[RMDB]
RNA sequence: GGGAACGACUCGAGUAGAGUCGAAAAGGGCUGCAAACAGGAUCUGAGUGGCCCCCUGCUCUGGAGAGGCCCCUCCAUGUAAACAGAACGAGUUUCUGGGAAACGUACAGAAGGCCAGGCUGUCGGGCACUUCACCGACAUUCGUGUCGGUGAAGUGAAAAGAAACAACAACAACAAC
Reactivity to DMS in 0.01 (KOAc 150mM, MgCl2 10mM, bicine 150mM(pH8.5), 24C), signal-to-noise 2, nucleotides 027 to 126: g040g020g000c010u020g000c020a070a110a140c100a090g000g010a120u040c050u010g000a130g030u000g000g000c010c000c000c000c030u000g020c100u000c020u020g060g000a090g000a100g030g020c020c020c020c010u000c090c010a040u040g000u000a050a090a210c030a030g020a000a020c080g010a210g030u000u020u000c000u000g000g000g020a050a070a090c090g020u030a060c140a040g010a060a050g000g000c000c000a000g000g000c020u000g000u010c060g000g000g000
Reactivity to 2A3 in 0.01 (KOAc 150mM, MgCl2 10mM, bicine 150mM(pH8.5), 24C), signal-to-noise 3, nucleotides 027 to 126: g000g060g000c010u040g000c080a040a280a060c030a080g210g090a180u100c040u100g040a010g030u040g030g000c000c020c020c020c010u030g010c060u000c010u030g000g000a080g020a030g000g020c000c010c000c000u000c020c000a040u090g090u190a070a080a040c010a000g030a030a010c010g070a060g130u000u000u000c000u020g020g000g000a100a130a000c030g020u050a000c020a070g090a070a040g140g000c000c010a020g010g000c030u020g050u080c050g000g050g030
Overview
The record gives the reactivity of an RNA of 177 nucleotides to DMS and 2A3. For 2A3 the reverse transcriptase was SuperScript II with manganese. The DMS profile rests on 3,144 reads.